[RMDB]
RNA sequence: GGGAACGACUCGAGUAGAGUCGAAAACAGAAAUGUCCAAUGAACGUCUAGUGAGGGCAUUGCUGCUGACACCAAAGAUAUUACCCCCGCUCACUGGUCGCCUGCGAUCAGGGUUCGGAAUUUUUGGAAAUAGACGAAGCUUCGGCUUCGUCUAUUUAAAAGAAACAACAACAACAAC
Reactivity to 2A3 in 0.01 (KOAc 150mM, MgCl2 10mM, bicine 150mM(pH8.5), 24C), signal-to-noise 6, nucleotides 027 to 126: c010a000g000a000a030a010u020g010u000c010c000a040a050u250g110a150a060c080g110u080c200u300a110g030u050g110a110g010g000g000c000a000u010u020g020c000u010g000c040u030g060a020c010a020c070c000a000a010a020g070a010u040a050u060u200a190c000c000c000c000c000g020c000u000c000a010c000u010g000g000u000c000g040c050c100u210g050c030g000a000u010c000a010g010g000g000u000u020c010g000g010a060a040u030u020u000u010u010g020g000
Reactivity to DMS in 0.01 (KOAc 150mM, MgCl2 10mM, bicine 150mM(pH8.5), 24C), signal-to-noise 3, nucleotides 027 to 126: c050a030g030a050a010a010u000g000u010c000c010a140a180u050g000a130a060c040g000u040c170u090a060g020u000g000a180g010g000g000c000a000u000u000g010c000u010g000c080u010g000a100c190a170c000c020a020a040a010g020a040u000a120u000u020a200c020c030c000c020c010g000c010u010c000a010c000u000g010g000u000c000g020c090c160u010g020c000g000a010u010c000a020g010g000g010u000u000c020g020g000a030a020u000u010u000u010u000g010g000

The record gives the reactivity of an RNA of 177 nucleotides to 2A3 and DMS. For DMS the reverse transcriptase was MarathonRT. The reactions ran in a buffer of 150 mM KOAc, 10 mM MgCl2 and 150 mM bicine (pH 8.5), at 24 C. Source: RMDB libraries RFM100 and RFMREP, as collected in RNAgym.